[RMDB]
RNA sequence: GGGAACGACUCGAGUAGAGUCGAAAACUGGUUCAGUGCCAGAUGUCACUGUGCAAGCUGAUGAGCAUCUUUCAAAGGUAUUCAGUAAUCUGUUUGCUAGUAUAUUAAGAGGAGAAGAUGGUGUUAGCACCGCUGAAUCGGCAAUAACAAUCAAUGCCACUUGCCUUACCUUCGGGUAAGGCAAGUGAAAAGAAACAACAACAACAAC
Reactivity to 2A3 in 0.01 (KOAc 150mM, MgCl2 10mM, bicine 150mM(pH8.5), 24C), signal-to-noise 2, nucleotides 027 to 156: c010u010g000g070u120u060c050a070g010u060g090c020c040a050g030a140u150g170u070c060a030c080u050g030u100g040c050a080a040g000c000u000g030a080u080g070a060g000c000a050u040c020u070u230u020c120a100a140a030g050g000u070a060u000u090c020a060g000u040a090a090u110c010u040g060u060u040u020g000c020u000a020g080u020a160u000a010u130u150a070a050g030a040g080g060a060g020a050a000g000a040u070g030g140u060g010u030u060a000g060c030a040c060c050g000c050u000g010a030a050u010c000g030g000c060a060a000u130a110a000c030a010a060u300c040a070a050u180g100c010
The record gives the reactivity of an RNA of 207 nucleotides to 2A3.
For 2A3 the reverse transcriptase was SuperScript II with manganese.
It was measured as part of the RMDB library OK3TST.